RNA sequence: GGGAACGACUCGAGUAGAGUCGAAAAGACCGUCAGUUAGACGGAAGAAGUGCAUAAAUCCACAUCGGAAGACAAGAUACUGCACAAAUGUGGAUAAGCGUACGGAUCUACGUGCGCUAAACGUGAGCCUAUGGAUCCACUUCGGUGGAUCCAUAGGAAAAGAAACAACAACAACAAC
Reactivity to DMS in 0.01 (KOAc 150mM, MgCl2 10mM, bicine 150mM(pH8.5), 24C), signal-to-noise 2, nucleotides 027 to 126: g020a120c030c010g000u000c000a240g000u100u020a160g000a000c000g010g020a160a010g000a080a070g040u020g000c090a120u000a120a090a000u000c000c030a020c000a060u000c170g050g040a270a030g000a230c110a080a090g000a070u040a100c050u000g000c040a080c030a120a170a010u000g000u010g020g000a010u080a100a060g000c000g020u000a000c010g020g000a200u140c250u010a060c040g010u030g020c000g000c000u010a000a020a040c170g000u010g010a150g020
Reactivity to 2A3 in 0.01 (KOAc 150mM, MgCl2 10mM, bicine 150mM(pH8.5), 24C), signal-to-noise 3, nucleotides 027 to 126: g130a010c000c000g000u000c000a080g020u110u300a060g000a000c030g120g040a020a010g050a090a040g010u100g000c090a110u100a200a180a000u020c010c000a000c000a030u090c040g130g040a140a020g020a120c030a110a000g050a070u090a140c110u070g020c010a020c010a030a080a020u030g000u000g000g020a000u020a060a010g000c000g030u000a000c000g020g110a050u060c070u190a060c040g000u000g000c000g000c000u000a000a040a020c060g020u020g070a000g160

Chemical mapping of a 177-nucleotide RNA with DMS and 2A3. 2A3 adducts were read by reverse transcription with SuperScript II with manganese. The 2A3 profile rests on 1,951 reads. For DMS the reverse transcriptase was MarathonRT.